[RMDB]
RNA sequence: GGGAACGACUCGAGUAGAGUCGAAAAGCCGGCCGGAUUGACCACGCUGGCCGACGAUGAGUUCCAGUGUGGCCCACGGAUGCCGAUGCUGCCGGGCGCUUGGGACUUGGGAACUUGGGACCGCGGGAGGACCGUGUUUGUUCGCAAACACGGUCCUAAAAGAAACAACAACAACAAC
Reactivity to 2A3 in 0.01 (KOAc 150mM, MgCl2 10mM, bicine 150mM(pH8.5), 24C), signal-to-noise 1, nucleotides 027 to 126: g040c000c030g000g000c000c010g010g040a100u040u300g080a220c030c000a000c030g000c000u000g010g000c050c060g000a030c000g010a040u160g110a030g030u030u040c000c000a020g000u020g000u000g300g060c040c040c000a040c030g000g000a050u120g010c010c060g170a190u110g000c040u040g040c000c110g060g000g000c000g000c000u070u090g000g000g000a130c090u000u000g060g000g060a030a090c030u080u060g020g020g020a120c000c000g050c180g070g000g000
Source: RMDB library OK1LIB, as collected in RNAgym. This 177-nucleotide RNA was probed chemically with 2A3. The RNA was probed in 150 mM KOAc, 10 mM MgCl2 and 150 mM bicine (pH 8.5) at 24 C.